[RMDB]
RNA sequence: GGGAACGACUCGAGUAGAGUCGAAAAGGGGUCACAAACUUUGAUCAGCGUGGCCAAGGCAACAGCCGUGUCUGAAGCCUCCACGGACACGGACAUGCCUUGGAAUCGCUGGGAGUUUGUGACGGAGGCACCCAAAAGUGUGACUUCGGUCACACAAGAUUUGAACAUGGUUCGCCAUGUUCAAAUCAAAAGAAACAACAACAACAAC
Reactivity to 2A3 in 0.01 (KOAc 150mM, MgCl2 10mM, bicine 150mM(pH8.5), 24C), signal-to-noise 6, nucleotides 027 to 156: g040g000g030g000u000c000a000c000a000a010a000c020u070u150u170g200a280u300c010a010g020c020g080u190g120g070c010c010a000a000g020g000c060a190a020c030a280g010c000c010g000u000g010u000c010u020g040a130a040g000c010c010u010c010c010a010c010g010g010a000c010a000c010g010g020a010c030a100u260g000c000c000u010u000g000g020a030a040u130c020g000c000u020g030g030g000a000g000u000u000u000g000u000g000a000c000g000g000a000g010g000c010a040c000c000c000a020a140a030a060g000u000g000u000g000a000c010u040u140c300g070g000u000c000a000c000a000c000a000a020
Reactivity to DMS in 0.01 (KOAc 150mM, MgCl2 10mM, bicine 150mM(pH8.5), 24C), signal-to-noise 1, nucleotides 027 to 156: g020g020g020g020u000c020a010c000a000a010a050c010u020u000u000g030a100u000c010a020g020c000g010u000g000g010c020c000a010a030g060g010c000a150a160c080a110g020c000c010g060u000g030u010c000u020g050a030a150g000c020c020u010c020c010a300c030g010g030a050c000a000c010g000g000a010c060a150u030g050c000c000u020u030g020g030a060a080u000c000g030c010u010g030g010g000a020g000u000u000u000g030u000g000a030c000g000g010a060g060g000c050a100c000c010c000a060a090a080a140g040u000g010u000g030a030c000u000u010c260g020g000u000c000a000c000a010c040a020a090
The record gives the reactivity of an RNA of 207 nucleotides to 2A3 and DMS.
It was measured as part of the RMDB library RNAMAK.